[RMDB]
RNA sequence: GGGAACGACUCGAGUAGAGUCGAAAAGUGUAUAGGCUUUCCGAGACCCCGCCUAUACACGAGUUAAGGGGUCAGGUCAUGUUAUGCUGGCUAUCUUACGUGUGCACCGAAGGGCUGCGGGUGCACACGGAUCUUACGCAGCCCAUUGCCAGCUAGAGAUUAUAAUAGGAUUCGUCCUAUUAUAAUCAAAAGAAACAACAACAACAAC
Reactivity to DMS in 0.01 (KOAc 150mM, MgCl2 10mM, bicine 150mM(pH8.5), 24C), signal-to-noise 1, nucleotides 027 to 156: g010u010g010u000a030u000a010g000g020c120u010u000u000c060c000g000a170g000a130c010c000c020c110g070c040c000u010a010u000a010c000a020c010g000a090g010u000u020a130a090g020g030g030g000u000c010a080g020g020u010c060a110u010g010u010u000a070u000g010c020u000g020g020c010u000a100u000c070u010u000a010c020g060u000g020u000g000c000a090c000c000g030a020a070g020g040g010c020u000g060c020g020g010g020u010g010c010a030c020a010c000g010g000a040u010c090u000u000a080c070g000c070a060g040c000c010c020a300u010u000g010c010c020a100g010c030u000a100g000a300
Reactivity to 2A3 in 0.01 (KOAc 150mM, MgCl2 10mM, bicine 150mM(pH8.5), 24C), signal-to-noise 2, nucleotides 027 to 156: g000u020g000u000a010u000a000g010g010c040u110u210u050c100c050g030a050g030a100c010c010c010c010g000c010c000u000a000u000a010c000a000c000g010a020g040u090u160a090a100g020g010g000g030u000c020a010g020g070u090c060a080u110g070u110u110a090u140g040c000u000g010g030c000u050a100u110c100u060u150a040c020g000u000g000u000g000c000a010c010c000g060a080a100g030g000g000c000u000g010c010g010g010g000u000g000c000a000c000a000c000g000g000a010u030c040u060u070a030c050g000c000a010g000c000c000c000a020u020u040g020c010c000a000g000c000u050a030g020a000
Description
An RNA of 207 nucleotides, treated with DMS and 2A3 and read out base by base. The reactions ran in a buffer of 150 mM KOAc, 10 mM MgCl2 and 150 mM bicine (pH 8.5), at 24 C. For 2A3, 1,990 sequencing reads were counted.